[RMDB]
RNA sequence: GGGAACGACUCGAGUAGAGUCGAAAACGUUGAACAGAUCAUAGGGCAGUUACUACCCGCCUUCAUGGAACUAGCCGGGGCGCUUCUCGCACUAAUCCCGCAGUUUGUCGAGGCAUUCGUUCAAAUCGGUACCGCGCUCGCGCCAAUUCUUCCUAUGACUUUGUGCGAUUUUCGAAUCGCACAAAGUAAAAGAAACAACAACAACAAC
Reactivity to 2A3 in 0.01 (KOAc 150mM, MgCl2 10mM, bicine 150mM(pH8.5), 24C), signal-to-noise 1, nucleotides 027 to 156: c010g000u000u050g050a080a020c010a030g020a060u120c010a130u100a010g020g020g000c050a010g060u120u110a090c080u090a050c020c000c030g000c030c000u170u170c030a150u190g140g040a030a030c030u000a040g030c000c050g040g010g000g000c040g000c000u200u110c120u100c120g000c000a010c030u100a060a020u040c050c030c010g000c010a000g000u020u060u090g070u120c050g010a080g110g020c010a070u060u050c030g030u070u030c040a000a110a180u000c120g010g010u020a050c000c020g000c010g000c010u040c000g040c010g000c010c010a050a050u060u090c050u060u030c030c030u050a040u230g060
This 207-nucleotide RNA was probed chemically with 2A3. 2A3 adducts were read by reverse transcription with SuperScript II with manganese. Values cover nucleotides 27 to 156. The reactions ran in a buffer of 150 mM KOAc, 10 mM MgCl2 and 150 mM bicine (pH 8.5), at 24 C. The data come from the RNA Mapping Database (RMDB), library OK3TST.